[RMDB]
RNA sequence: GGGAACGACUCGAGUAGAGUCGAAAAUGCCGCGAGACCAUUUCGUGGAUUGAGGAUAAGAAGCGCAUCCUUACCGAGACCGACAGUCUGGAGAUGGAUCUGACCGGUGUGAUGACCCUGCAGCGUACCUUUUACCAGUGUUCGCACUGGUAAAAGGAAAAGAAACAACAACAACAAC
Reactivity to 2A3 in 0.01 (KOAc 150mM, MgCl2 10mM, bicine 150mM(pH8.5), 24C), signal-to-noise 3, nucleotides 027 to 126: u040g020c000c000g010c050g010a010g010a050c010c010a020u010u050u060c090g090u210g020g000a010u020u090g030a020g020g010a040u040a110a080g120a090a010g080c070g000c170a080u090c010c020u020u010a140c030c000g040a050g090a080c010c020g070a110c020a040g040u000c020u040g060g010a040g000a040u020g070g120a300u010c010u050g030a030c020c030g010g000u020g040u020g040a050u140g040a050c000c010c010u050g020c080a070g030c040g110u110a130
Reactivity to DMS in 0.01 (KOAc 150mM, MgCl2 10mM, bicine 150mM(pH8.5), 24C), signal-to-noise 5, nucleotides 027 to 126: u000g010c000c010g020c020g000a110g010a030c040c040a030u000u000u000c040g020u010g000g010a080u010u000g010a230g010g010a070u000a100a090g010a100a060g020c170g010c180a080u000c030c010u000u000a110c050c020g000a090g020a040c040c050g000a160c110a030g010u000c010u000g010g010a020g000a030u000g000g000a100u000c010u000g010a210c300c030g030g030u010g020u000g000a170u010g000a110c020c010c000u000g020c060a050g000c120g010u010a130
The record gives the reactivity of an RNA of 177 nucleotides to 2A3 and DMS.
For DMS, 4,533 sequencing reads were counted.
The RNA was probed in 150 mM KOAc, 10 mM MgCl2 and 150 mM bicine (pH 8.5) at 24 C.